RNA sequence: GGGAACGACUCGAGUAGAGUCGAAAAUGGUGUCGGUCACGAGAAGCGAUGUCUAUAGUCGACCACCAAACUUCAGCAGACACAGCGUGGCCAAGGUACAGCCAGUGUCCGUCUACACGGUCAGGAAUCCCAUCUCGUCGUUCGCGACGAGAUGGGAAAAAGAAACAACAACAACAAC
Reactivity to DMS in 0.01 (KOAc 150mM, MgCl2 10mM, bicine 150mM(pH8.5), 24C), signal-to-noise 1, nucleotides 027 to 126: u030g000g000u000g060u000c150g090g000u000c000a030c090g000a110g030a120a300g010c060g020a000u020g000u000c000u000a070u000a080g000u000c030g000a000c040c090a040c000c040a040a120a180c000u010u110c190a000g000c010a000g000a060c040a100c020a000g040c050g040u000g000g000c010c000a200a050g100g040u000a140c180a140g030c040c000a190g000u000g000u000c000c000g020u000c090u080a040c180a040c000g000g030u000c030a120g000g000a140a000
Reactivity to 2A3 in 0.01 (KOAc 150mM, MgCl2 10mM, bicine 150mM(pH8.5), 24C), signal-to-noise 1, nucleotides 027 to 126: u110g030g000u000g080u050c000g000g000u010c070a050c000g090a150g040a250a000g080c000g060a150u100g030u190c090u040a000u000a030g030u090c010g000a110c000c000a020c000c010a010a010a010c060u090u060c040a080g000c020a000g110a000c000a000c000a010g030c000g070u100g000g000c000c090a100a090g090g000u190a090c030a040g000c000c000a000g000u000g000u010c000c000g000u020c000u010a000c030a000c050g000g090u020c060a010g050g000a000a080
Chemical mapping of a 177-nucleotide RNA with DMS and 2A3. DMS adducts were read by reverse transcription with MarathonRT. DMS (dimethyl sulfate) methylates the pairing face of unpaired adenines and cytosines. The reactions ran in a buffer of 150 mM KOAc, 10 mM MgCl2 and 150 mM bicine (pH 8.5), at 24 C. It was measured as part of the RMDB library OK1LIB. The 2A3 profile rests on 636 reads. For 2A3 the reverse transcriptase was SuperScript II with manganese.